[RMDB]
RNA sequence: GGGAACGACUCGAGUAGAGUCGAAAAGAAUAGCCUCUCGCAUGUUUAGCGCUAGCUACGGACUUCAAGCUGGGGACGGUACGGAGGAUGCAGUCACCACAAUCAUUAGUGAUCUCUUGUCUGUCACUCGGAGGCACUAGUUCGCUAGUGCCUCCGAAAAAGAAACAACAACAACAAC
Reactivity to DMS in 0.01 (KOAc 150mM, MgCl2 10mM, bicine 150mM(pH8.5), 24C), signal-to-noise 1, nucleotides 027 to 126: g030a110a120u000a130g070c000c020u010c080u010c230g080c000a070u000g070u010u000u000a080g090c090g060c100u000a040g020c130u000a020c170g000g000a110c020u000u010c060a040a200g000c080u000g010g050g000g000a000c210g050g000u000a120c020g030g050a050g000g000a140u030g040c150a100g010u000c020a000c060c020a020c030a190a040u010c100a100u090u030a010g050u020g000a000u070c040u000c000u000u000g020u110c070u070g000u000c020a110c090
Reactivity to 2A3 in 0.01 (KOAc 150mM, MgCl2 10mM, bicine 150mM(pH8.5), 24C), signal-to-noise 2, nucleotides 027 to 126: g080a020a070u100a000g060c000c000u000c000u000c030g000c020a080u020g070u230u090u120a000g030c060g070c080u030a040g030c060u020a040c140g040g090a070c010u010u000c120a080a140g060c010u010g010g040g000g040a020c050g000g010u080a000c020g060g060a020g020g070a020u060g000c010a020g040u040c020a000c030c000a060c040a060a080u200c060a070u100u050a060g020u060g060a080u050c040u000c000u020u180g060u000c030u060g080u030c030a020c040